RNA sequence: GGGAACGACUCGAGUAGAGUCGAAAAGAUAUGGAUCCACUUGUGACAUGUCGACACCUCGGAAACGAGGUGACGACAACAGCACAAGGUGGAUCCUAAGUCAAACGAAUGCGUUCGCGCAUUCGAACGACCUAAAAUUGUUCGCAAUUUUAGGUCGAAAAGAAACAACAACAACAAC
Reactivity to 2A3 in 0.01 (KOAc 150mM, MgCl2 10mM, bicine 150mM(pH8.5), 24C), signal-to-noise 4, nucleotides 027 to 126: g040a000u060a010u130g010g000a000u000c000c010a010c000u000u000g000u000g060a160c090a300u200g020u010c000g010a010c000a000c010c000u000c020g000g050a100a100a060c010g010a000g000g000u010g000a000c000g000a000c000a010a030c050a030g140c010a010c000a010a040g190g030u030g000g000a000u000c000c000u010a010a010g040u020c030a050a070a120c010g010a010a000u010g010c020g020u050u100c300g000c010g000c170a010u010u000c010g000a060a030
Reactivity to DMS in 0.01 (KOAc 150mM, MgCl2 10mM, bicine 150mM(pH8.5), 24C), signal-to-noise 4, nucleotides 027 to 126: g000a050u010a300u000g000g000a000u000c000c000a020c010u000u000g000u000g000a070c110a230u010g000u000c000g010a090c000a010c000c000u000c000g000g000a150a100a200c010g010a010g010g030u000g000a030c010g010a010c000a020a040c300a200g010c010a010c000a020a010g000g060u000g010g000a000u000c000c000u000a000a060g010u010c040a130a130a270c030g000a010a000u000g000c010g010u000u010c240g020c000g020c000a000u000u000c000g010a060a130
This 177-nucleotide RNA was probed chemically with 2A3 and DMS. 2A3 adducts were read by reverse transcription with SuperScript II with manganese. DMS (dimethyl sulfate) methylates the pairing face of unpaired adenines and cytosines. For DMS the reverse transcriptase was MarathonRT. It was measured as part of the RMDB library TTRDES. Values cover nucleotides 27 to 126. For 2A3, 13,601 sequencing reads were counted.